[RMDB]
RNA sequence: GGGAACGACUCGAGUAGAGUCGAAAACGAGUCCUCCUAACACUGGUGGGAACUGAGAAGUCUGGCAGGAACUCCAGUCAGAUGGUCACCUCUUUAUGGAGAGCCAGAGGCAGCCAGGGAGACCAGCAAAGAAAGGAGGAAGCCUAGAAACGUGAAAAUUAGGACGUAUAUUCGUAUACGUCCUAAUAAAAGAAACAACAACAACAAC
Reactivity to DMS in 0.01 (KOAc 150mM, MgCl2 10mM, bicine 150mM(pH8.5), 24C), signal-to-noise 2, nucleotides 027 to 156: c050g000a280g040u000c000c020u000c000c010u010a130a250c140a100c020u010g020g020u010g030g010g040a270a090c060u000g000a110g010a120a300g050u000c000u000g000g000c080a170g030g000a090a180c040u000c000c010a100g000u000c110a080g000a100u000g000g000u000c060a250c060c010u000c020u010u000u000a120u010g010g020a050g050a300g010c040c040a080g000a030g010g000c030a150g000c000c020a130g000g000g040a300g030a090c010c000a030g020c060a040a100a080g020a050a140a080g000g030a060g020g010a030a040g010c010c030u000a080g010a070a120a010c080g010u000g010a090a080a110
Reactivity to 2A3 in 0.01 (KOAc 150mM, MgCl2 10mM, bicine 150mM(pH8.5), 24C), signal-to-noise 3, nucleotides 027 to 156: c020g060a050g130u030c000c000u000c000c000u040a090a020c050a010c030u000g000g020u040g030g200g060a050a040c020u030g000a050g000a130a010g080u040c000u000g000g000c010a020g030g190a140a140c000u000c020c000a020g050u080c030a010g020a100u180g010g080u180c060a110c100c010u020c020u000u070u090a040u040g020g000a000g000a010g030c000c000a010g000a000g070g000c080a020g100c000c000a000g010g020g000a060g020a000c010c000a010g010c040a020a080a050g100a130a060a000g010g000a000g000g000a000a010g000c000c010u070a100g110a070a100a040c070g020u090g060a140a090a010